[RMDB]
Overview
An RNA of 177 nucleotides, treated with 2A3 and DMS and read out base by base. Reactivities are given for positions 27 through 126. The data come from the RNA Mapping Database (RMDB), library M2PK90. DMS (dimethyl sulfate) methylates the pairing face of unpaired adenines and cytosines. The reactions ran in a buffer of 150 mM KOAc, 10 mM MgCl2 and 150 mM bicine (pH 8.5), at 24 C. The DMS profile rests on 675 reads.
RNA sequence: GGGAACGACUCGAGUAGAGUCGAAAAACUAGGAGCGCACAUCUCUCUAAGUCUGUACGACAGUCUGUCUCUCUAGCACGCUUGUUCAACGAGAGAGAGAGAGCGUUGGAACAAGUGUGCAACGAAAGGUAGACGGAGGAUUCGUCCUCCGUCUACCAAAAGAAACAACAACAACAAC
Reactivity to 2A3 in 0.01 (KOAc 150mM, MgCl2 10mM, bicine 150mM(pH8.5), 24C), signal-to-noise 2, nucleotides 027 to 126: a000c060u040a020g040g000a020g000c050g040c030a030c030a170u050c030u000c000u000c000u040a080a020g050u010c030u070g180u080a020c020g050a020c040a010g020u000c020u050g040u000c020u010c000u030c020u090a030g000c000a000c000g000c000u000u000g010u010u000c000a000a000c020g000a010g010a020g000a010g020a010g000a010g000a110g030c020g000u000u050g160g010a020a000c000a000a010g010u010g000u000g000c010a020a010c030g070a090a060a040
Reactivity to DMS in 0.01 (KOAc 150mM, MgCl2 10mM, bicine 150mM(pH8.5), 24C), signal-to-noise 1, nucleotides 027 to 126: a090c040u020a090g000g000a060g000c080g020c090a030c070a060u000c020u000c000u000c020u010a110a150g000u000c020u010g020u020a020c060g010a300c110a110g000u000c070u000g010u020c070u020c020u000c040u010a180g020c000a020c000g010c020u000u000g030u000u000c000a020a010c020g000a060g030a200g000a020g010a090g060a070g000a000g000c040g000u000u000g020g010a000a040c040a020a020g010u020g010u000g000c020a110a100c280g000a070a030a010